[RMDB]
Structure probing data (DMS and 2A3) for a 177-nucleotide construct. The DMS profile rests on 1,170 reads. The 2A3 profile rests on 1,150 reads. The RNA was probed in 150 mM KOAc, 10 mM MgCl2 and 150 mM bicine (pH 8.5) at 24 C.

RNA sequence: GGGAACGACUCGAGUAGAGUCGAAAAAAUCAAGAAUGAAGAUAAUAGGUUUUUCUUUAACGUUCGCGCAUAAUAAUUCCGCGUCUUUUCAAGGUUACGUUCGUUAAAAGUUAGGUCCUUCAAUCUUACUAGUUGGGUAUUUCGAUACCCAACUAGUAAAAGAAACAACAACAACAAC
Reactivity to DMS in 0.01 (KOAc 150mM, MgCl2 10mM, bicine 150mM(pH8.5), 24C), signal-to-noise 1, nucleotides 027 to 126: a030a020u060c100a010a080g000a120a050u000g030a100a070g030a130u000a080a070u000a100g000g030u000u030u030u000u000c040u000u030u000a150a000c100g000u000u010c000g010c210g000c100a060u000a020a100u000a120a270u000u000c080c040g040c050g000u000c040u000u030u000u000c060a080a140g000g020u100u000a100c110g000u010u000c060g000u000u030a030a000a030a000g000u080u000a020g030g100u000c000c010u000u020c060a040a010u000c070u000u000
Reactivity to 2A3 in 0.01 (KOAc 150mM, MgCl2 10mM, bicine 150mM(pH8.5), 24C), signal-to-noise 3, nucleotides 027 to 126: a000a000u140c090a020a070g160a140a200u150g150a100a010g050a090u290a300a040u100a200g010g030u030u040u000u020u000c020u070u030u010a070a070c000g030u000u000c040g000c000g000c080a010u030a080a070u130a150a060u290u010c040c030g000c010g060u030c050u080u080u070u130c030a030a010g010g020u010u060a040c050g040u040u060c000g010u010u090a000a180a000a000g040u040u040a020g010g020u050c040c000u070u130c010a040a080u010c000u010u010